[RMDB]
RNA sequence: GGGAACGACUCGAGUAGAGUCGAAAAUUUUUUUCUGCAGAUAGGGGCUUAGGAUAAUGAUUUGUGCUUUAUUGGGGCAGAUUAGUCACAGUGUCACUACUGUCUCUCAAUGUGCCCUGUACAUGUCUUCAGUAAUGGUUUUCGAACCAUUACUGAAAAAAGAAACAACAACAACAAC
Reactivity to DMS in 0.01 (KOAc 150mM, MgCl2 10mM, bicine 150mM(pH8.5), 24C), signal-to-noise 8, nucleotides 027 to 126: u000u000u010u010u010u010u010c030u000g020c060a060g010a080u000a060g000g000g000g000c050u010u010a050g010g010a070u020a060a070u020g000a060u010u000u000g010u010g010c050u010u010u010a090u030u020g010g000g000g010c010a010g000a020u000u000a070g000u000c180a020c010a030g010u000g000u020c300a100c240u060a020c010u000g010u000c060u000c010u000c140a020a010u000g000u000g010c000c010c000u000g000u000a020c140a050u010g000u000c080
Reactivity to 2A3 in 0.01 (KOAc 150mM, MgCl2 10mM, bicine 150mM(pH8.5), 24C), signal-to-noise 6, nucleotides 027 to 126: u070u040u020u000u010u040u050c020u040g030c020a010g020a050u060a040g020g000g000g010c030u070u070a030g050g050a050u070a150a090u160g060a050u070u030u080g040u020g030c030u090u130u100a120u140u240g010g000g000g000c000a010g010a150u000u030a000g020u020c010a000c010a040g040u020g070u150c040a030c130u100a010c000u030g010u000c000u000c010u000c050a020a020u040g020u020g120c000c000c000u020g010u010a030c010a030u100g030u000c020